Source information: This 207-nucleotide RNA was probed chemically with DMS and 2A3. Source: RMDB library ARCHII, as collected in RNAgym. The RNA was probed in 150 mM KOAc, 10 mM MgCl2 and 150 mM bicine (pH 8.5) at 24 C. High 2A3 reactivity points to a flexible backbone, as in loops and unpaired stretches. For 2A3 the reverse transcriptase was SuperScript II with manganese.
[RMDB]
RNA sequence: GGGAACGACUCGAGUAGAGUCGAAAACAGCCCUAACGGGUGAGGUGGUUGCGCUUAUCAAACAAAUGUAAAUGCUAGUGAGAUUAUAAUCCUAGUCUUGUUAUACGAGACUGCUUUAUGGUCUUGCGAGACCCUCAAACUGCGGGAAAGUCUUAAACUGUUAAACAAACUUCGGUUUGUUUAACAGAAAAGAAACAACAACAACAAC
Reactivity to DMS in 0.01 (KOAc 150mM, MgCl2 10mM, bicine 150mM(pH8.5), 24C), signal-to-noise 3, nucleotides 027 to 156: c030a230g020c000c000c000u020a050a100c150g020g050g050u000g000a050g020g010u000g010g010u000u010g010c030g000c030u000u000a150u010c100a110a060a180c080a050a140a110u000g010u000a040a040a070u000g010c040u010a040g030u000g000a020g000a050u010u000a010u000a020a020u000c020c010u000a010g010u000c010u000u010g020u000u010a190u010a250c020g030a010g020a020c000u000g000c030u000u000u000a020u000g010g000u000c010u010u000g030c030g000a010g000a060c030c020c010u010c050a040a030a070c080u000g000c040g020g020g010a070a060a090g010u010c020u000u000a100a110a200
Reactivity to 2A3 in 0.01 (KOAc 150mM, MgCl2 10mM, bicine 150mM(pH8.5), 24C), signal-to-noise 4, nucleotides 027 to 156: c020a030g030c000c000c000u030a090a010c050g010g030g000u020g000a020g020g030u050g020g030u050u070g010c050g000c050u110u130a100u210c090a050a100a140c060a050a170a070u140g040u100a020a080a070u110g040c010u010a040g010u010g030a000g000a010u010u020a010u040a010a000u010c030c100u090a010g000u010c010u010u040g050u130u150a210u080a240c020g010a010g000a010c000u000g020c000u030u010u010a010u030g000g000u000c000u000u010g000c000g010a030g070a060c010c020c000u020c000a090a110a100c050u080g010c050g010g010g000a080a080a010g030u020c000u030u070a140a220a080